[RMDB]
RNA sequence: GGGAACGACUCGAGUAGAGUCGAAAAGGUGAUGUCAGUUCAUCAAAGCGUCUCACCCUGUGUUCCCCCAGGAGAACAAUGAUGGGGUGGAGGGAGCUGGAAAGACCAUAUUAGGAACAAAAGGUGGAGCUAUGAGCACAGAUAAAGACUCAAGUCAGACUGGAGUGCACUUCGGUGCACUCCAGUCAAAAGAAACAACAACAACAAC
Reactivity to 2A3 in 0.01 (KOAc 150mM, MgCl2 10mM, bicine 150mM(pH8.5), 24C), signal-to-noise 2, nucleotides 027 to 156: g030g020u020g020a020u090g150u270c040a010g040u170u040c010a130u040c050a150a120a000g010c040g050u020c010u020c010a010c030c050c000u050g060u000g040u090u020c000c000c030c020c000a030g000g060a130g010a070a000c020a050a050u120g020a070u090g060g000g000g000u030g020g040a070g000g020g000a070g010c000u020g070g000a090a030a030g060a000c010c010a010u100a110u140u090a030g030g060a040a030c020a050a090a020a020g020g000u010g010g040a030g000c000u050a030u060g020a030g000c030a000c000a060g080a050u160a040a080a000g000a010c030u090c110a000a000g200u050c030a120